[RMDB]
RNA sequence: GGGAACGACUCGAGUAGAGUCGAAAAUGAGAAACACGUGCGAUGAAAAGCCAAGAAGGGUAUUAGCCAUGCUUCCUCGAGCAGAGGUGGGAUUGCAGACUCUGUGGUCUACCUUUCCACUGAUACGGACUGAGCUAAAUUUCGAUUUAGCUCAGUCAAAAGAAACAACAACAACAAC
Reactivity to DMS in 0.01 (KOAc 150mM, MgCl2 10mM, bicine 150mM(pH8.5), 24C), signal-to-noise 5, nucleotides 027 to 126: u010g010a090g020a090a090a080c080a040c090g010u010g020c060g000a100u010g010a080a090a090a180g010c040c040a050a090g010a080a090g020g010g010u010a060u000u000a110g020c010c040a040u000g000c070u000u000c030c020u000c040g010a090g010c130a080g000a130g010g010u000g010g010g010a030u000u000g020c030a050g000a040c030u000c160u000g010u010g010g000u000c010u000a040c060c020u000u000u000c000c020a040c040u010g000a210u010a100c200g010
Reactivity to 2A3 in 0.01 (KOAc 150mM, MgCl2 10mM, bicine 150mM(pH8.5), 24C), signal-to-noise 3, nucleotides 027 to 126: u090g010a000g060a060a090a000c020a010c100g060u100g000c030g000a030u080g080a090a050a030a050g020c020c030a040a030g130a040a050g100g000g000u060a070u140u090a090g000c010c010a020u040g040c030u040u020c000c010u040c020g050a050g060c090a010g030a020g040g020u000g020g010g030a020u000u050g020c020a000g000a080c010u030c050u170g130u130g060g000u010c000u010a060c000c000u020u020u000c000c010a030c030u040g050a030u070a130c070g050